[RMDB]
RNA sequence: GGGAACGACUCGAGUAGAGUCGAAAAGUUGGCCCCGAUGGAGUUUCCGAUGAGCACCGGUGAGAAGAAACUGUCUCGCAGAAUAGAAGUCUCUUCUUGUUUGCUUUGAGACUUCUUCUCCACAGGGCUCUUCGGCUCUUCGCGGGUACCCAGCAACGUAAUAAAGUAGCUUCGGCUACUUUAUUACAAAAGAAACAACAACAACAAC
Reactivity to 2A3 in 0.01 (KOAc 150mM, MgCl2 10mM, bicine 150mM(pH8.5), 24C), signal-to-noise 2, nucleotides 027 to 156: g010u010u000g010g000c020c010c000c010g100a120u130g130g040a040g010u130u300u110c030c000g010a000u010g000a010g010c030a150c220c010g000g030u130g010a010g000a030a000g000a040a130a000c100u110g000u020c000u000c010g000c010a000g050a050a030u030a040g000a030a040g270u080c090u040c010u270u000c020u080u200g050u080u090u010g040c050u190u160u280g000a000g000a000c000u020u010c000u000u000c000u010c010c000a010c010a030g020g020g010c000u000c030u010u000c000g000g000c000u000c000u010u010c020g010c090g040g020g010u030a030c020c000c000a000g030c030a020a040c070